[RMDB]
RNA sequence: GGGAACGACUCGAGUAGAGUCGAAAAGAAGCGUGUACAUUCAAAUAGCAGUAUCACGGGAUGGCGAUUGGAGUUAUGGACUGUGCCAAAACGCAUACAACAACUUUAGACCAUAUAUAGCUGCAGCGUCCAUACCCUUGUUCGCAAGGGUAUGGACAAAAGAAACAACAACAACAAC
Reactivity to DMS in 0.01 (KOAc 150mM, MgCl2 10mM, bicine 150mM(pH8.5), 24C), signal-to-noise 1, nucleotides 027 to 126: g010a100a060g040c050g000u000g010u000a080c060a060u000u020c060a030a110a110u030a060g000c050a040g000u000a040u000c040a110c070g030g000g060a100u000g030g020c040g010a190u000u030g010g000a050g010u000u000a140u010g010g000a120c160u000g010u000g030c000c090a040a020a130a220c110g000c000a000u000a010c040a030a070c060a030a060c040u000u030u000a040g000a100c040c010a030u000a050u000a140u010a080g000c010u020g010c020a100g020c200
Reactivity to 2A3 in 0.01 (KOAc 150mM, MgCl2 10mM, bicine 150mM(pH8.5), 24C), signal-to-noise 1, nucleotides 027 to 126: g080a030a020g090c020g020u020g010u100a040c060a010u020u170c130a060a060a210u100a020g050c090a000g030u010a010u090c010a010c070g010g100g000a020u010g030g060c000g050a090u070u160g070g020a040g000u150u010a070u100g030g050a050c110u090g010u030g010c000c020a080a060a070a020c120g000c010a010u130a130c020a120a010c000a050a000c020u080u040u090a070g040a110c000c010a020u040a000u000a000u010a120g010c010u000g050c060a040g000c030